[RMDB]
RNA sequence: GGGAACGACUCGAGUAGAGUCGAAAAACAAGCCCUGUCCUCCCAUGACGCUGGUGAGGGGCAGUGUGGGGAGGAAGGGAAAGCAGGAGAAGGGCUGGGUCGGCUCAGGGACUCACAGGACACUGUGCACCCGGGUCUAAUUCGUUAGACCCGGGUGAAAAGAAACAACAACAACAAC
Reactivity to DMS in 0.01 (KOAc 150mM, MgCl2 10mM, bicine 150mM(pH8.5), 24C), signal-to-noise 1, nucleotides 027 to 126: a090c040a110a120g010c000c000c000u000g020u010c000c010u010c000c000c000a230u000g020a000c090g040c060u010g000g000u000g020a010g010g020g000g010c020a000g020u010g040u010g010g010g040g020a020g030g050a300a000g020g000g030a030a050a080g000c070a020g000g000a070g000a120a090g000g020g000c040u010g010g000g020u000c050g000g010c070u010c100a150g000g010g010a090c100u000c070a020c020a070g000g000a140c300a090c040u000g000u000g000
Reactivity to 2A3 in 0.01 (KOAc 150mM, MgCl2 10mM, bicine 150mM(pH8.5), 24C), signal-to-noise 1, nucleotides 027 to 126: a000c100a080a020g000c010c010c030u030g300u050c000c000u020c020c000c010a040u160g130a040c000g030c010u000g000g090u150g070a060g030g000g000g000c010a020g010u030g000u060g070g000g010g000a000g000g070a030a000g020g010g000a080a020a020g080c060a020g000g110a080g020a070a040g090g000g020c030u080g070g060g010u070c030g020g000c010u030c070a060g050g000g010a040c020u020c050a020c000a020g040g050a040c040a020c190u030g000u060g100